[RMDB]
RNA sequence: GGGAACGACUCGAGUAGAGUCGAAAAGCUCGGUGACGCGGCGUCUGCGUGGGUCCGAAAGAUUUCUUGUCGCAAAUCUACAAGACAUUGGUUAACGUGGGGGCCGCUUGAGCGGCCGCUCGGCGGGUCAAGGUACGGUGUUCGCGCCGUGCCUUGAAAAAGAAACAACAACAACAAC
Reactivity to DMS in 0.01 (KOAc 150mM, MgCl2 10mM, bicine 150mM(pH8.5), 24C), signal-to-noise 8, nucleotides 027 to 126: g010c010u000c010g000g020u020g010a110c190g010c010g000g000c020g010u010c010u000g000c030g010u000g010g020g000u010c010c020g000a110a150a090g010a040u000u010u000c030u010u020g020u020c150g020c230a040a060a070u030c030u010a040c120a130a060g000a020c070a100u030u020g010g010u030u030a110a040c020g010u000g000g010g000g000g010c000c000g000c000u010u010g010a050g010c000g000g020c050c020g000c030u020c050g000g000c010g000g010g010
Reactivity to 2A3 in 0.01 (KOAc 150mM, MgCl2 10mM, bicine 150mM(pH8.5), 24C), signal-to-noise 9, nucleotides 027 to 126: g020c010u020c020g090g110u170g050a060c080g000c000g020g000c010g300u010c010u010g000c010g010u030g040g080g110u030c010c000g040a120a090a010g060a030u020u060u020c010u020u040g040u040c030g040c110a080a080a160u110c020u030a020c010a040a000g020a010c030a060u040u130g090g000u090u140a080a010c020g010u040g000g010g000g040g000c000c000g000c000u020u030g000a010g020c000g010g020c020c010g000c030u090c060g110g030c010g010g010g020
Structure probing data (DMS and 2A3) for a 177-nucleotide construct. Source: RMDB library OK1LIB, as collected in RNAgym. Reactivities are rounded to 0.1 and cut off at 0 and 3. For DMS, 36,342 sequencing reads were counted. DMS adducts were read by reverse transcription with MarathonRT.